[RMDB]
RNA sequence: GGGAACGACUCGAGUAGAGUCGAAAAUGUCUAAUUGGAAAGGAAAUAGUUGAAGAAGAUGGUAAAGAAGAUAACGAAAUAGAAGCUGAGCUCUCCAAGCUUUUGGCAACUCUUUUCCUAUUGCGCACAUGCACCCGCUAUUCGUAGCGGGUGCAUGAAAAGAAACAACAACAACAAC
Reactivity to 2A3 in 0.01 (KOAc 150mM, MgCl2 10mM, bicine 150mM(pH8.5), 24C), signal-to-noise 2, nucleotides 027 to 126: u150g040u050c040u060a000a120u130u100g070g010a020a040a010g040g040a000a210a000u160a250g010u080u070g000a010a020g070a000a000g000a000u020g000g000u040a060a030a040g000a140a100g030a160u030a150a050c100g020a080a020a000u150a070g180a250a000g050c050u010g070a000g060c000u020c000u000c030c000a120a000g000c000u000u050u220u120g130g070c000a050a110c000u000c000u010u090u030u000c010c000u000a030u000u090g000c120g000c020a040
Reactivity to DMS in 0.01 (KOAc 150mM, MgCl2 10mM, bicine 150mM(pH8.5), 24C), signal-to-noise 1, nucleotides 027 to 126: u030g000u020c080u020a090a020u100u040g040g000a000a090a070g000g010a000a040a050u010a110g000u030u000g030a090a080g010a000a040g020a040u000g000g000u000a070a060a000g070a110a020g000a060u060a000a090c120g000a120a060a000u100a020g020a000a080g000c030u000g020a110g000c000u050c010u000c030c000a020a160g020c000u000u000u000u010g000g000c010a050a030c060u000c050u000u000u000u030c000c000u000a080u000u000g000c270g000c130a030
The data come from the RNA Mapping Database (RMDB), library OK1LIB. The record gives the reactivity of an RNA of 177 nucleotides to 2A3 and DMS. The RNA was probed in 150 mM KOAc, 10 mM MgCl2 and 150 mM bicine (pH 8.5) at 24 C.